Overview:
The data come from the RNA Mapping Database (RMDB), library TTRDES. An RNA of 177 nucleotides, treated with 2A3 and DMS and read out base by base. The DMS profile rests on 4,594 reads. The RNA was probed in 150 mM KOAc, 10 mM MgCl2 and 150 mM bicine (pH 8.5) at 24 C. For DMS the reverse transcriptase was MarathonRT.
RNA sequence: GGGAACGACUCGAGUAGAGUCGAAAAGAUAUGGAGCCUAGGUGGGAGCUCCUGUCGGAAACGACAGAAGAGCGUUGAUCACCGGGCUCCUAAGUCAAAGUUCAACCAGUCUUCGGACUGGUUGAACCGCUAAUGUAUCGUUCGCGAUACAUUAGCGAAAAGAAACAACAACAACAAC
Reactivity to 2A3 in 0.01 (KOAc 150mM, MgCl2 10mM, bicine 150mM(pH8.5), 24C), signal-to-noise 2, nucleotides 027 to 126: g010a000u040a020u070g020g010a030g030c050c050u130a300g040g000u020g030g170g100a040g030c010u000c010c000u020g000u010c000g000g050a010a030a010c000g050a010c000a000g110a300a030g000a140g000c020g110u260u180g060a130u020c010a000c000c030g000g000g000c010u000c000c000u010a000a010g000u000c000a120a100a040g000u000u000c000a000a000c000c010a000g010u000c000u040u200c300g190g000a000c000u000g000g000u000u000g000a000a000c010
Reactivity to DMS in 0.01 (KOAc 150mM, MgCl2 10mM, bicine 150mM(pH8.5), 24C), signal-to-noise 3, nucleotides 027 to 126: g010a020u010a210u000g010g010a020g030c010c010u000a090g100g010u000g000g000g010a100g010c000u000c000c000u000g000u000c010g000g010a060a040a100c000g010a010c000a000g010a150a190g000a020g010c010g030u000u010g010a110u010c000a010c010c010g020g000g010c000u000c000c000u000a000a040g000u000c010a090a120a150g010u000u000c000a000a000c010c000a000g000u000c000u000u020c270g020g020a010c000u000g000g000u000u000g000a000a000c000

Values are in units of 0.01, from 0 to 300, in steps of 10.